Structure probing data (DMS) for a 177-nucleotide construct. It was measured as part of the RMDB library TTRINS. The DMS profile rests on 2,587 reads. The RNA was probed in 150 mM KOAc, 10 mM MgCl2 and 150 mM bicine (pH 8.5) at 24 C.
RNA sequence: GGGAACGACUCGAGUAGAGUCGAAAAGAUAUGGACGUAUCUCUGGGCAUCUACUACGGGAGGUCCAUGUCGGAAACGACAUGUGACCUUUGAUCGUAGGUAGAUGCCCAGAGAUACGUCCUAAGUCCUCUGUAUUUCUGUUCGCAGAAAUACAGAGAAAAGAAACAACAACAACAAC
Reactivity to DMS in 0.01 (KOAc 150mM, MgCl2 10mM, bicine 150mM(pH8.5), 24C), signal-to-noise 1, nucleotides 027 to 126: g020a080u000a300u020g010g030a050c000g030u000a000u000c000u000c010u010g000g000g010c000a010u010c000u000a000c010u020a030c010g000g010g010a000g030g000u000c000c000a010u000g010u000c000g000g000a130a100a210c010g020a020c010a000u000g010u030g040a010c000c000u000u010u010g020a070u020c000g020u000a030g020g030u000a000g010a000u000g000c010c000c020a000g000a000g010a000u000a000c010g010u000c000c000u000a000a120g010u010c050